Structure probing data (DMS and 2A3) for a 207-nucleotide construct. It was measured as part of the RMDB library M2RFPK. High DMS reactivity at an A or C suggests that its Watson-Crick edge is free.
[RMDB]
RNA sequence: GGGAACGACUCGAGUAGAGUCGAAAAUACCUUGAGUAUUGCUGAAUUCAGUUUAGCGUGCAUGCUCUUGGCUAUUCUCAUAGUGAUUGUGAAAUUUGGAGUUACUUAUUCGUCAAUUCAAUAUUUAAAAAGGUGCCGAUGUUCGCAUCGGCACCAAUCAAUAGAGAUUCUUCGGAAUCUCUAUUGAAAAAGAAACAACAACAACAAC
Reactivity to DMS in 0.01 (KOAc 150mM, MgCl2 10mM, bicine 150mM(pH8.5), 24C), signal-to-noise 1, nucleotides 027 to 156: u010a030c000c010u000u010g000a070g040u000a030u000u010g020c020u000g000a070a100u010u020c170a230g000u000u000u010a090g000c070g020u000g050c130a180u000g000c010u010c010u010u020g010g030c050u010a130u000u000c030u000c000a140u000a180g010u000g000a070u000u010g000u000g000a060a110a140u000u010u030g000g000a160g000u000u000a050c040u000u010a140u010u000c040g030u000c030a030a090u000u010c020a020a070u020a060u000u000u000a070a050a060a100a140g030g060u000g010c020c000g020a050u000g030u000u000c300g030c040a000u010c090g030g000c020a030c010c010a010a010
Reactivity to 2A3 in 0.01 (KOAc 150mM, MgCl2 10mM, bicine 150mM(pH8.5), 24C), signal-to-noise 2, nucleotides 027 to 156: u150a010c030c000u000u000g010a010g030u050a120u250u090g010c010u030g060a180a160u210u190c070a130g100u060u100u110a080g030c060g020u030g040c010a020u000g010c000u000c010u010u010g010g000c000u000a010u100u000c010u010c010a060u050a010g100u100g100a100u080u040g040u020g100a130a040a100u130u070u010g100g010a100g090u090u060a030c010u090u110a060u140u150c090g030u020c010a010a030u060u060c000a050a050u010a160u200u240u300a150a230a080a030a080g000g010u000g010c000c000g010a000u000g010u020u130c130g000c090a000u000c000g000g000c020a000c000c000a000a000
The RNA was probed in 150 mM KOAc, 10 mM MgCl2 and 150 mM bicine (pH 8.5) at 24 C. The 2A3 profile rests on 565 reads.